[RMDB]
RNA sequence: GGGAACGACUCGAGUAGAGUCGAAAAGAUAUGGAUUCAUUAGAGUAACCCUCGGAAACGAGGGUUUAUAGUAGAAUGAUCCUAAGUCAAAGCAUUUUUGAUAUUGUUCGCAAUAUCAAAAAUGCAAGUACGGAAAAGAGUUCGCUCUUUUCCGUACAAAAGAAACAACAACAACAAC
Reactivity to 2A3 in 0.01 (KOAc 150mM, MgCl2 10mM, bicine 150mM(pH8.5), 24C), signal-to-noise 1, nucleotides 027 to 126: g000a010u050a020u160g030g020a060u200u140c070a040u040u070a070g020a040g300u040a040a010c000c000c000u000c040g020g040a070a090a050c020g010a000g040g000g010u030u020u030a010u010a000g000u010a030g050a040a000u000g000a000u000c010c020u010a120a020g030u020c100a150a040a000g040c000a000u000u000u000u000u000g010a000u010a000u010u010g010u020u040c290g000c080a000a000u000a000u010c000a000a000a000a000a000u000g000c000a000a010
Reactivity to DMS in 0.01 (KOAc 150mM, MgCl2 10mM, bicine 150mM(pH8.5), 24C), signal-to-noise 4, nucleotides 027 to 126: g000a030u010a300u010g000g010a030u000u010c010a010u010u010a110g000a280g000u000a010a010c000c000c000u000c010g010g000a070a070a170c000g020a020g010g000g000u000u000u000a000u010a090g010u010a130g010a050a010u010g000a060u000c000c020u010a050a170g020u000c030a080a130a140g000c000a010u000u000u000u000u000g000a010u000a010u000u000g010u010u010c270g010c000a000a010u000a000u000c000a000a010a000a010a000u000g000c000a030a040